[RMDB]
RNA sequence: GGGAACGACUCGAGUAGAGUCGAAAAUAGAGUGUCUACAUUGCCUUCUAGGUUCAGAGAUUGUGCGGCUCUAGGGACGCUGGCUCACAUCACGUCCUUUACUGGGUUAAGUCUAAAGGAAGUGCUGCGGUAGACGUUGCUUCGGCAACGUCUACCGAAAAGAAACAACAACAACAAC
Reactivity to 2A3 in 0.01 (KOAc 150mM, MgCl2 10mM, bicine 150mM(pH8.5), 24C), signal-to-noise 1, nucleotides 027 to 126: u260a010g250a020g030u020g000u010c030u020a070c010a300u030u090g130c000c000u000u050c030u020a030g040g000u050u090c070a040g050a060g060a170u000u090g040u130g030c020g000g030c030u000c000u100a000g110g000g050a060c080g130c270u050g030g000c060u040c020a000c000a020u040c000a000c040g000u000c030c050u030u020u150a090c090u010g060g000g000u030u040a020a060g020u000c150u110a100a100a070g000g020a000a080g060u010g080c060u140g000